[RMDB]
RNA sequence: GGGAACGACUCGAGUAGAGUCGAAAAAUCACCAAAAGUGUUAGCGAAUUGGUCAAUAUGGGCAUCACCCACAUGAAAGAAAUUUAUGAUUUGAUAUAUUCGGAGACAUCAAUGCAGAUGUUGAUCCUCCGUCAUUAUUUUUCGAAAUAAUGACGGAAAAAGAAACAACAACAACAAC
Reactivity to DMS in 0.01 (KOAc 150mM, MgCl2 10mM, bicine 150mM(pH8.5), 24C), signal-to-noise 7, nucleotides 027 to 126: a080u010c060a120c030c010a080a080a130a170g010u000g010u000u000a080g020c030g020a060a060u000u000g020g020u000c020a030a060u010a090u000g010g000g010c070a090u010c140a120c020c010c020a130c080a060u000g010a030a070a130g000a080a080a090u000u000u000a040u010g000a120u000u010u010g010a040u010a060u000a070u000u000c050g010g000a170g010a020c020a010u000c030a070a090u000g020c200a080g010a050u000g010u000u010g000a130u000c040c070
Reactivity to 2A3 in 0.01 (KOAc 150mM, MgCl2 10mM, bicine 150mM(pH8.5), 24C), signal-to-noise 2, nucleotides 027 to 126: a000u040c030a030c010c000a000a020a000a130g100u080g050u090u090a040g100c020g050a050a090u030u050g130g000u000c000a030a020u060a090u160g000g000g030c020a060u040c030a050c000c010c000a040c020a040u080g070a050a060a070g140a040a180a030u070u110u070a110u100g030a060u000u030u090g000a000u070a010u010a020u180u030c020g020g030a050g000a030c010a010u050c040a020a110u200g090c040a020g010a060u020g010u080u040g040a040u000c000c020
Structure probing data (DMS and 2A3) for a 177-nucleotide construct. For DMS the reverse transcriptase was MarathonRT. Reactivities are given for positions 27 through 126. The 2A3 profile rests on 2,687 reads. The reactions ran in a buffer of 150 mM KOAc, 10 mM MgCl2 and 150 mM bicine (pH 8.5), at 24 C.